[RMDB]
RNA sequence: GGGAACGACUCGAGUAGAGUCGAAAAAUAAAGUGGCCAAAACCAACUCAUUAUAGGUCAUGAUAUAGUAAGCAGGAAGUAUUGGAAUAUGUGGAGAGAAAACUGUGAAAACUGCUUUUUCUGUUUAUUUUACUCUACAAUUCGUUGUAGAGUAAAAAAAAGAAACAACAACAACAAC
Reactivity to 2A3 in 0.01 (KOAc 150mM, MgCl2 10mM, bicine 150mM(pH8.5), 24C), signal-to-noise 6, nucleotides 027 to 126: a010u170a010a050a010g020u010g010g020c010c000a040a070a040a050c070c010a070a090c050u080c140a090u090u220a090u120a200g000g000u010c020a010u010g030a000u070a020u030a130g140u090a030a020g030c020a010g020g040a040a020g040u060a040u080u100g040g050a080a030u080a070u240g110u070g040g050a060g000a000g000a060a040a040a050c030u050g020u030g090a030a020a030a040c000u010g000c000u120u030u010u010u020c030u010g050u010u040u000a060
Reactivity to DMS in 0.01 (KOAc 150mM, MgCl2 10mM, bicine 150mM(pH8.5), 24C), signal-to-noise 7, nucleotides 027 to 126: a040u010a040a080a250g000u010g010g010c000c020a110a050a150a170c150c110a090a100c130u010c140a070u020u020a110u030a140g020g020u000c020a020u000g000a200u020a040u010a060g010u010a040a040g020c020a020g000g000a080a050g020u010a050u010u000g000g000a090a050u010a050u010g010u020g000g010a100g010a120g010a090a070a070a070c050u000g000u010g000a080a050a090a100c040u000g000c050u000u000u000u000u000c010u000g000u010u000u020a060